[RMDB]
RNA sequence: GGGAACGACUCGAGUAGAGUCGAAAACGGAUACGCUUCGGCGUAUCCGAAAUAAAGGCGGAAUAAAGCGCGCGCAAAAACCGGCAAUAAAGCGCGCGCAAAAAACGCGUCACUUCGGUGACGCGAACGGUAUAAGAGUGUUCGCACUCUUAUACCGAAAAGAAACAACAACAACAAC
Reactivity to DMS in 0.01 (KOAc 150mM, MgCl2 10mM, bicine 150mM(pH8.5), 24C), signal-to-noise 1, nucleotides 027 to 126: c000g010g000a010u010a020c000g040c010u000u000c210g030g020c000g030u010a000u000c000c000g000a010a010a070u010a030a100a090g000g000c050g000g000a140a090u000a070a160a140g000c010g020c000g000c000g000c020a070a090a040a150a090c080c020g000g000c050a070a070u010a060a110a110g000c000g000c000g050c010g030c020a000a010a050a030a010a030c010g000c000g010u000c030a020c000u000u010c140g020g010u000g000a000c020g000c000g000a030a050
Background: An RNA of 177 nucleotides, treated with DMS and read out base by base. Conditions: 150 mM KOAc, 10 mM MgCl2 and 150 mM bicine (pH 8.5), 24 C. It was measured as part of the RMDB library M2PK50.